Notes
Structure probing data (DMS and 2A3) for a 170-nucleotide construct. For 2A3, 3,067 sequencing reads were counted. 2A3 adducts were read by reverse transcription with SuperScript II with manganese. The reactions ran in a buffer of 150 mM KOAc, 10 mM MgCl2 and 150 mM bicine (pH 8.5), at 24 C.
[RMDB]
RNA sequence: GGGAACGACUCGAGUAGAGUCGAAAAAUAAAGGCAAACCAAUUCUUUGGGUCAAUAAAGCAUCUUAUGAUACUAAUCUUAAUAAGUUCAAUAGAGCUAGUUUGCGUCAAAUUUUUGACGUAGCCCCUAAGACAGCCGUUCGCGGCUGUCAAAAGAAACAACAACAACAAC
Reactivity to DMS in 0.01 (KOAc 150mM, MgCl2 10mM, bicine 150mM(pH8.5), 24C), signal-to-noise 2, nucleotides 027 to 129: a100u040a040a060a080g000g010c070a000a090a210c050c050a000a170u050u000c050u020u020u000g000g000g030u060c070a080a050u000a070a190a000g010c030a010u000c000u000u030a160u010g000a000u020a030c030u020a000a040u000c200u100u040a200a170u050a140a030g000u000u020c070a070a300u000a060g030a040g000c000u020a000g000u000u000u000g010c040g000u030c000a000a000a290u050u090u000u000u000g040a000c040g000u020a080g010c090c000c000c000u010a000a150
Reactivity to 2A3 in 0.01 (KOAc 150mM, MgCl2 10mM, bicine 150mM(pH8.5), 24C), signal-to-noise 3, nucleotides 027 to 129: a000u140a000a050a000g090g000c030a020a020a020c000c000a080a060u140u020c060u100u040u000g000g000g000u110c100a010a210u050a170a000a000g030c000a130u040c010u000u040a080u050g080a020u060a100c020u040a290a120u140c020u170u060a240a120u120a140a030g000u000u000c040a050a080u020a050g000a030g010c000u000a050g100u020u070u040g030c000g000u010c000a020a020a020u170u140u020u090u020g000a000c000g010u000a000g000c050c000c000c000u040a000a000